[RMDB]
RNA sequence: GGGAACGACUCGAGUAGAGUCGAAAAUCAGAUGAGACUAGACAUCAGACUAGAUAGUAUCACACUACUGGUACAUAGUAGAGACAUACAUAGAUGCGUAUGACACAUCAGAGGCGCGGGCCACCGAAGGUCAUGCUACGUUCGCGUAGCAUGACCUAAAAGAAACAACAACAACAAC
Reactivity to DMS in 0.01 (KOAc 150mM, MgCl2 10mM, bicine 150mM(pH8.5), 24C), signal-to-noise 2, nucleotides 027 to 126: u000c040a080g000a080u000g020a100g020a100c080u010a040g000a120c040a020u000c050a110g000a050c050u000a050g020a130u000a050g030u000a120u010c060a090c180a070c090u000a020c030u010g010g000u000a130c140a030u000a040g000u020a040g000a170g000a080c160a000u000a040c010a090u000a180g010a090u000g010c120g000u010a050u000g000a100c040a030c040a010u000c010a030g010a110g000g020c070g020c120g020g000g060c040c030a100c140c080g000a050
Reactivity to 2A3 in 0.01 (KOAc 150mM, MgCl2 10mM, bicine 150mM(pH8.5), 24C), signal-to-noise 1, nucleotides 027 to 126: u070c000a010g030a070u040g040a020g050a050c060u070a000g010a080c010a060u070c040a040g080a160c050u020a060g090a270u100a030g050u080a010u120c080a030c010a010c120u130a010c000u000g000g070u060a040c060a160u070a000g020u040a010g000a000g020a050c010a030u050a030c000a010u100a060g120a150u180g080c000g010u020a020u080g070a040c000a000c000a110u070c000a020g120a100g030g000c030g000c010g010g060g060c010c000a050c020c020g010a010
An RNA of 177 nucleotides, treated with DMS and 2A3 and read out base by base. Reactivities are rounded to 0.1 and cut off at 0 and 3. DMS adducts were read by reverse transcription with MarathonRT. For 2A3, 844 sequencing reads were counted. Source: RMDB library OK2TRN, as collected in RNAgym. The reactions ran in a buffer of 150 mM KOAc, 10 mM MgCl2 and 150 mM bicine (pH 8.5), at 24 C.